Chemical mapping of a 177-nucleotide RNA with DMS.
RNA sequence: GGGAACGACUCGAGUAGAGUCGAAAAGAUAUGGAUCUGCUACCCACCCAUGUGUUCGGAAACGAACAUGAAUGGAGGCAGAGUCCUAAGUCAAAGACCCGAGCUAUCUUCGGAUAGCUCGGGUCAAGCAGACAAUAGAGUUCGCUCUAUUGUCUGCAAAAGAAACAACAACAACAAC
Reactivity to DMS in 0.01 (KOAc 150mM, MgCl2 10mM, bicine 150mM(pH8.5), 24C), signal-to-noise 1, nucleotides 027 to 126: g000a070u010a140u010g010g000a130u000c010u000g030c010u000a080c040c020c050a300c030c000c000a030u000g000u010g010u000u000c000g000g010a050a100a100c000g040a010a010c000a000u000g010a100a020u000g000g030a130g000g000c000a000g040a050g020u010c000c000u000a090a130g000u020c000a050a060a160g000a000c000c010c000g010a030g010c000u000a000u000c000u000u010c190g010g010a050u000a000g010c040u000c000g000g000g000u000c000a000a030
Reactivities are given for positions 27 through 126. The RNA was probed in 150 mM KOAc, 10 mM MgCl2 and 150 mM bicine (pH 8.5) at 24 C.